[RMDB]
RNA sequence: GGGAACGACUCGAGUAGAGUCGAAAACAUGCAUUAAGCGGCGUGAAGCAUGUAGAAAGCUUUGCGAGCAUAUCGAGCUACAUGUGAGCGAAAGCGGGAUGCAUGAACGAUAUGCAACGUAAGAUUAGGGAAUUUCAUAGUUCGCUAUGAAAUUCCCAAAAGAAACAACAACAACAAC
Reactivity to DMS in 0.01 (KOAc 150mM, MgCl2 10mM, bicine 150mM(pH8.5), 24C), signal-to-noise 1, nucleotides 027 to 126: c000a000u000g000c060a050u040u000a040a080g090c000g010g030c000g040u000g000a230a170g090c000a000u000g000u060a060g000a070a040a120g000c060u000u010u100g050c090g030a230g100c040a030u140a090u000c040g020a070g050c020u000a080c000a060u000g000u040g000a300g000c000g050a040a000a000g070c000g000g010g000a010u000g000c000a000u020g030a000a010c040g000a080u090a000u030g050c070a050a130c140g010u010a050a120g020a160u000u000a130
Reactivity to 2A3 in 0.01 (KOAc 150mM, MgCl2 10mM, bicine 150mM(pH8.5), 24C), signal-to-noise 4, nucleotides 027 to 126: c030a060u040g030c000a010u040u130a250a060g100c040g130g030c100g040u040g070a030a000g000c010a020u000g010u030a020g060a130a080a000g010c050u060u190u180g070c070g030a010g000c050a010u020a050u130c090g040a040g080c020u030a050c010a000u030g110u110g070a010g040c010g150a210a000a020g060c010g020g110g010a000u060g000c000a000u000g000a040a000c000g000a000u040a030u130g080c040a120a070c110g030u140a140a060g050a230u090u280a100